[RMDB]
RNA sequence: GGGAACGACUCGAGUAGAGUCGAAAAAUCUAAACAGGAGCCAAUUCUUGCUUUAGAGGAAGUAAGGAUUUCAUGCUAAAACCCAGAAGGUGGUUCAACUUCAGGCCACAGGUCUUGGCAUAGGAAGGUGCCAUUUGGGCUGAUAGCAUAAACAUAAGGACGUCUGACUAUUCGUAGUCAGACGUCCAAAAGAAACAACAACAACAAC
Reactivity to 2A3 in 0.01 (KOAc 150mM, MgCl2 10mM, bicine 150mM(pH8.5), 24C), signal-to-noise 1, nucleotides 027 to 156: a000u030c040u070a060a090a040c060a060g130g040a040g000c050c050a020a060u020u000c000u000u000g020c000u040u070u110a130g000a090g070g040a000a000g010u010a000a000g000g000a020u080u140u100c060a020u040g000c000u020a000a000a020a060c010c010c010a060g070a110a060g040g020u020g000g070u050u030c040a060a070c010u020u000c020a020g060g040c000c000a000c000a060g200g150u010c060u020u000g000g030c000a000u040a060g080g020a040a030g020g000u030g000c010c000a040u110u040u070g000g000g050c080u020g060a020u000a000g000c000a010u120a050a050a000c060a140u100a030a200

The record gives the reactivity of an RNA of 207 nucleotides to 2A3. 2A3 adducts were read by reverse transcription with SuperScript II with manganese. Conditions: 150 mM KOAc, 10 mM MgCl2 and 150 mM bicine (pH 8.5), 24 C. It was measured as part of the RMDB library OK3TST. Values cover nucleotides 27 to 156. The 2A3 profile rests on 513 reads.